The record gives the reactivity of an RNA of 177 nucleotides to DMS. Values cover nucleotides 27 to 126. Source: RMDB library TTRINS, as collected in RNAgym. The DMS profile rests on 1,124 reads.
RNA sequence: GGGAACGACUCGAGUAGAGUCGAAAAGAUAUGGACACACUAGACGCCCUGUUUGAGGGAGACGGUGGUCGGAAACGACCAUACGUCUUUGAUCUCACGGACAGGGCGUCUAGUGUGUCCUAAGUCAGUAGUACGAUCACUUCGGUGAUCGUACUACAAAAGAAACAACAACAACAAC
Reactivity to DMS in 0.01 (KOAc 150mM, MgCl2 10mM, bicine 150mM(pH8.5), 24C), signal-to-noise 1, nucleotides 027 to 126: g010a020u010a300u020g010g000a030c000a040c000a040c000u000a000g010a030c010g000c000c000c000u000g020u000u000u000g050a010g020g000g000a030g000a010c000g000g040u000g000g000u010c000g020g000a090a150a280c010g020a000c000c020a020u000a060c040g000u000c010u010u010u020g000a070u010c000u000c020a080c300g000g010a030c020a000g000g000g010c000g000u000c010u000a000g000u000g010u010g000u000c000c010u000a000a030g000u010c050a120